RNA sequence: GGGAACGACUCGAGUAGAGUCGAAAACCAAGAUUCCAUAACUCACUACCCAGCUCUUAAGAUGGUUCAAACACAUCUUAGCCACUAUGUUCUUAACAUAGAUUGGUUGUGGUUUGCAUUUGAGACUAGUGAUAAACGAGUUCGCUCGUUUAUCACUAAAAGAAACAACAACAACAAC
Reactivity to 2A3 in 0.01 (KOAc 150mM, MgCl2 10mM, bicine 150mM(pH8.5), 24C), signal-to-noise 2, nucleotides 027 to 126: c000c000a010a000g070a080u110u010c020c010a040u050a120a040c010u020c070a020c020u030a050c030c010c010a030g030c020u000c020u100u040a050a010g010a010u020g070g000u160u110c050a100a100a000c030a010c000a090u020c000u050u030a010g030c010c010a020c000u010a010u000g020u000u070c090u190u170a030a010c010a000u020a030g050a150u060u110g010g020u010u060g010u010g000g030u010u040u090g000c010a060u000u020u130g070a060g040a040c040u020
Reactivity to DMS in 0.01 (KOAc 150mM, MgCl2 10mM, bicine 150mM(pH8.5), 24C), signal-to-noise 1, nucleotides 027 to 126: c000c010a140a140g010a080u010u020c010c020a020u000a110a070c010u000c020a050c050u000a070c080c020c030a100g000c110u010c060u000u010a030a010g010a000u010g030g000u000u020c080a100a040a090c120a070c010a010u000c060u000u000a060g020c020c010a080c000u000a000u000g000u000u010c230u000u020a050a060c010a000u000a010g000a120u010u000g050g010u000u000g010u020g000g010u000u000u010g010c090a080u000u000u010g000a070g010a080c150u000
An RNA of 177 nucleotides, treated with 2A3 and DMS and read out base by base. Reactivities are given for positions 27 through 126. Conditions: 150 mM KOAc, 10 mM MgCl2 and 150 mM bicine (pH 8.5), 24 C. For DMS the reverse transcriptase was MarathonRT. For 2A3, 2,342 sequencing reads were counted. It was measured as part of the RMDB library 15KREP.